Conditions: 150 mM KOAc, 10 mM MgCl2 and 150 mM bicine (pH 8.5), 24 C. Structure probing data (2A3 and DMS) for a 177-nucleotide construct. For 2A3, 10,466 sequencing reads were counted. Values cover nucleotides 27 to 126. For 2A3 the reverse transcriptase was SuperScript II with manganese.
[RMDB]
RNA sequence: GGGAACGACUCGAGUAGAGUCGAAAAGAUAUGGACGAUGGGGAGAUCUAAUGUCGGAAACGACAUGAUGAUCGACGAUCCCGCUCGUCCUAAGUCAAACAUUUAUGGUGUUCGCACCAUAAAUGAACAAGAUCUAUGGGUUCGCCCAUAGAUCUUGAAAAGAAACAACAACAACAAC
Reactivity to 2A3 in 0.01 (KOAc 150mM, MgCl2 10mM, bicine 150mM(pH8.5), 24C), signal-to-noise 3, nucleotides 027 to 126: g000a000u040a020u080g000g010a010c010g010a030u120g010g000g010g010a050g000a010u000c000u070a100a010u010g010u000c010g000g000a070a040a020c000g000a000c010a010u010g020a030u150g000a000u010c000g000a030c020g010a010u010c000c000c000g070c100u030c010g000u000c000c000u010a070a000g030u020c070a180a050a070c010a020u000u000u010a010u010g000g000u030g050u080u110c300g040c140a000c000c000a010u010a010a000a000u010g010a030a030
Reactivity to DMS in 0.01 (KOAc 150mM, MgCl2 10mM, bicine 150mM(pH8.5), 24C), signal-to-noise 7, nucleotides 027 to 126: g010a010u000a180u010g000g000a000c000g010a020u010g010g000g010g000a060g010a010u000c000u000a210a010u000g020u000c000g010g000a060a030a110c000g010a010c000a000u000g000a100u010g000a010u000c000g010a080c270g000a140u000c010c000c050g000c210u000c000g010u000c000c000u000a010a050g000u000c020a150a120a270c010a000u000u000u000a000u000g000g020u000g010u000u000c250g010c000a010c000c000a010u000a000a000a000u000g000a120a170